Chemical mapping of a 177-nucleotide RNA with DMS. Conditions: 150 mM KOAc, 10 mM MgCl2 and 150 mM bicine (pH 8.5), 24 C. For DMS, 554 sequencing reads were counted.
RNA sequence: GGGAACGACUCGAGUAGAGUCGAAAACAGAUGAACUGCAAUUUGUUCUAUUCCCCACACAAUCACCGCUAUAACUAUCAAUAUUGCUAGCACAACUAUUAGUACUGGAGGGGAGGAAGCUUUAAAGUAAGAAUUCCCUGUUCGCAGGGAAUUCUUAAAAAGAAACAACAACAACAAC
Reactivity to DMS in 0.01 (KOAc 150mM, MgCl2 10mM, bicine 150mM(pH8.5), 24C), signal-to-noise 1, nucleotides 027 to 126: c080a010g020a090u000g000a050a080c150u000g010c020a110a090u000u000u000g000u020u000c160u000a300u000u020c000c010c000c250a140c080a070c130a130a090u020c060a040c050c030g030c000u030a060u000a080a050c120u000a060u010c040a020a060u010a020u010u000g000c040u000a040g020c100a070c040a040a050c070u000a050u000u000a070g050u010a080c170u000g000g000a080g010g000g030g010a030g020g000a090a040g020c050u000u000u000a030a050a140g000